[RMDB]
RNA sequence: GGGAACGACUCGAGUAGAGUCGAAAAGAAAGAAAGAAAGAAAGGUAUGAAGUCCUAUUCACGCUGGAUAGGAUAAACUUCAUAUUGAUCGUGUAUGUGCUAACGCACAUACACGAAUGCGCAUGCAGAACUGCAUGCAUGAACAUACAGCGUGCAACAUGCGCAUACCUUUCGAGGUAUGCGCAUGAAAAGAAACAACAACAACAAC
Reactivity to 2A3 in 0.01 (KOAc 150mM, MgCl2 10mM, bicine 150mM(pH8.5), 24C), signal-to-noise 2, nucleotides 027 to 156: g070a000a050a030g060a060a120a000g050a070a080a000g060a100a120a010g070g020u020a000u000g000a000a000g020u010c000c010u000a000u000u010c100a020c030g000c000u000g000g000a000u000a000g000g000a040u110a090a040a010c000u000u010c000a020u020a050u020u010g010a020u040c000g000u000g000u000a000u010g000u000g020c050u080a180a010c140g000c010a010c000a000u000a000c010a000c010g010a010a000u040g050c030g000c000a000u000g000c000a000g100a300a060c220u090g000c000a000u000g000c010a040u090g040a040a040c050a000u280a040c000a010g000c000g040u030g000c020a090a100